[RMDB]
RNA sequence: GGGAACGACUCGAGUAGAGUCGAAAACGCGGAUACUUCGGUAUCCGCGAAAGAAGCGAAGGCGUACCGAAAUAAAACGGUAAUAAAUCGCAAAACGCCUAUAAAGCCUAGACUUCGGUCUAGGCAACUCGUAGAUCUAGUUCGCUAGAUCUACGAGAAAAGAAACAACAACAACAAC
Reactivity to 2A3 in 0.01 (KOAc 150mM, MgCl2 10mM, bicine 150mM(pH8.5), 24C), signal-to-noise 3, nucleotides 027 to 126: c000g010c000g020g010a010u010a010c020u040u050c120g050g010u000a010u000c000c010g020c000g000a000a000a000g010a110a020g030c010g030a030a010g040g010c010g010u010a000c000c020g080a060a090a020u300a030a120a000a020c010g010g020u000a020a000u030a020a120a050u220c000g000c020a000a160a010a000c040g020c020c020u090a110u130a160a080a000g000c000c000u010a010g000a020c010u050u040c300g070g000u000c000u000a000g010g000c000a000a000
Reactivity to DMS in 0.01 (KOAc 150mM, MgCl2 10mM, bicine 150mM(pH8.5), 24C), signal-to-noise 2, nucleotides 027 to 126: c000g020c000g010g000a010u000a010c020u010u010c120g020g000u000a000u000c000c000g000c000g000a000a020a140g000a160a110g010c010g020a060a020g000g030c130g020u000a030c010c000g020a070a050a150u030a080a060a110a140c040g000g000u000a050a090u010a070a100a160u000c020g000c020a110a050a110a040c080g010c010c000u010a060u010a050a120a150g000c000c000u010a000g000a040c000u000u000c270g010g000u000c000u000a000g000g000c010a000a000
The record gives the reactivity of an RNA of 177 nucleotides to 2A3 and DMS. Values cover nucleotides 27 to 126. The DMS profile rests on 2,185 reads. The RNA was probed in 150 mM KOAc, 10 mM MgCl2 and 150 mM bicine (pH 8.5) at 24 C. The data come from the RNA Mapping Database (RMDB), library M2PK50.